This 177-nucleotide RNA was probed chemically with DMS and 2A3.
DMS adducts were read by reverse transcription with MarathonRT.
Source: RMDB libraries RFM100 and RFMREP, as collected in RNAgym.
RNA sequence: GGGAACGACUCGAGUAGAGUCGAAAAGAUCAAAUAGACCAAUUACUGAAUAUGGCUUUUGACAUAUCUUCUUCUUCAUGGGUGAGGAUUAAGCUGAUAUCCUGACCCACCUAUCAUUAGUCCUUCAAUUUUCCCUACUAUUCGUAGUAGGGAAAAUAAAAGAAACAACAACAACAAC
Reactivity to DMS in 0.01 (KOAc 150mM, MgCl2 10mM, bicine 150mM(pH8.5), 24C), signal-to-noise 8, nucleotides 027 to 126: g010a100u010c040a020a040a050u020a020g020a140c010c010a050a080u010u010a170c250u020g010a090a060u010a090u010g000g000c010u000u000u000u010g010a060c100a100u020a090u000c040u010u010c090u000u000c050u000u000c120a120u000g010g000g020u000g000a020g000g000a020u000u000a060a110g010c210u010g000a080u010a030u000c010c000u000g000a030c000c000c000a030c130c060u010a060u010c080a080u010u010a070g000u000c040c020u010u010c120a070
Reactivity to 2A3 in 0.01 (KOAc 150mM, MgCl2 10mM, bicine 150mM(pH8.5), 24C), signal-to-noise 9, nucleotides 027 to 126: g010a090u040c020a020a020a040u190a090g130a190c010c010a030a050u120u100a130c120u190g120a090a050u210a160u110g020g000c010u020u000u020u020g030a020c030a070u160a090u070c030u090u010c000u080u020c010u130u100c060a070u090g000g000g020u030g110a010g010g010a020u030u070a080a070g100c070u060g040a050u030a010u180c000c000u010g040a010c030c000c010a020c000c000u100a090u140c040a110u080u130a040g070u060c020c000u060u100c040a040